Source: RMDB library OK2TRN, as collected in RNAgym. This 177-nucleotide RNA was probed chemically with 2A3 and DMS. Values cover nucleotides 27 to 126.
[RMDB]
RNA sequence: GGGAACGACUCGAGUAGAGUCGAAAAUUGAACGACCGAGGCACCGCCAUCGGCCGCGUGGUGGUUCGCGAGAUCCGGGAACACGUCACCAUCGACUACGAGAUGUUCGAGGUGCUGUACCUCACCGGCGAUAUAUUGUGUUCGCACAAUAUAUCGCAAAAGAAACAACAACAACAAC
Reactivity to 2A3 in 0.01 (KOAc 150mM, MgCl2 10mM, bicine 150mM(pH8.5), 24C), signal-to-noise 3, nucleotides 027 to 126: u080u100g030a100a030c010g030a020c040c030g020a060g000g030c080a060c280c150g000c030c020a180u060c020g070g030c040c020g050c040g010u010g020g010u010g020g080u070u020c090g030c010g200a050g000a050u070c030c010g060g010g020a030a000c120a010c050g110u130c020a010c020c000a200u010c020g030a020c030u040a040c020g140a060g040a190u070g010u110u050c060g000a010g020g040u070g020c090u110g050u080a030c010c010u030c030a070c080c010g090
Reactivity to DMS in 0.01 (KOAc 150mM, MgCl2 10mM, bicine 150mM(pH8.5), 24C), signal-to-noise 2, nucleotides 027 to 126: u010u000g000a120a150c070g000a080c100c010g010a030g000g020c080a090c050c100g020c040c020a070u010c090g000g010c030c030g010c090g000u010g020g010u020g010g010u000u000c030g000c070g000a220g000a080u000c070c030g000g000g010a040a020c070a040c140g000u010c020a030c010c000a120u000c020g020a060c050u010a170c100g010a130g010a160u000g000u000u000c040g000a090g010g020u010g010c090u010g020u000a060c060c040u010c040a110c060c090g010

About this RNA:
High DMS reactivity at an A or C suggests that its Watson-Crick edge is free.